[RMDB]
This 207-nucleotide RNA was probed chemically with DMS and 2A3. For DMS the reverse transcriptase was MarathonRT. 2A3 adducts were read by reverse transcription with SuperScript II with manganese.
RNA sequence: GGGAACGACUCGAGUAGAGUCGAAAAUUUGUUCUCCAUGAUAAGAUGUGGCAUCACAGAACCCUCCUUAUCCUCUAGGUCAGAUAACUUUUACUGUGCUUAGGAUUUUAAUGUCUUUCUAAGACUUAAAUGAUAAUUUUUCCUUCUCAGCAUGCAAUAAAUACUGACCUUUCGAGGUCAGUAUUUAAAAAGAAACAACAACAACAAC
Reactivity to DMS in 0.01 (KOAc 150mM, MgCl2 10mM, bicine 150mM(pH8.5), 24C), signal-to-noise 3, nucleotides 027 to 156: u000u010u000g010u010u000c020u000c020c050a120u000g000a110u000a050a070g000a090u000g030u000g030g030c060a080u000c070a140c140a170g010a110a120c020c000c010u000c030c020u010u000a080u000c030c050u000c060u000a130g020g030u010c060a080g000a120u000a050a110c060u000u000u020u010a090c050u000g040u010g020c080u000u010a020g010g010a120u000u000u000u000a020a060u010g010u000c010u000u010u000c100u010a070a060g010a050c000u000u000a010a050a030u000g030a220u000a070a120u000u000u000u010u000c020c020u000u000c030u000c030a080g000c050a070u000g000c060a090a190
Reactivity to 2A3 in 0.01 (KOAc 150mM, MgCl2 10mM, bicine 150mM(pH8.5), 24C), signal-to-noise 3, nucleotides 027 to 156: u110u070u120g010u030u000c040u020c020c000a030u070g010a000u050a030a020g040a090u090g050u120g050g050c030a050u060c020a100c030a120g090a080a070c010c000c000u030c010c000u030u020a030u030c000c020u050c020u030a040g010g040u070c030a000g020a100u120a120a090c020u050u020u030u140a100c050u090g020u040g040c010u010u030a010g030g000a010u010u000u000u070a080a100u160g010u000c000u010u200u050c100u160a070a000g000a000c010u040u040a000a030a050u070g060a010u080a180a100u210u030u050u050u100c030c030u070u030c040u030c020a020g060c100a020u120g150c000a000a130
The reactions ran in a buffer of 150 mM KOAc, 10 mM MgCl2 and 150 mM bicine (pH 8.5), at 24 C.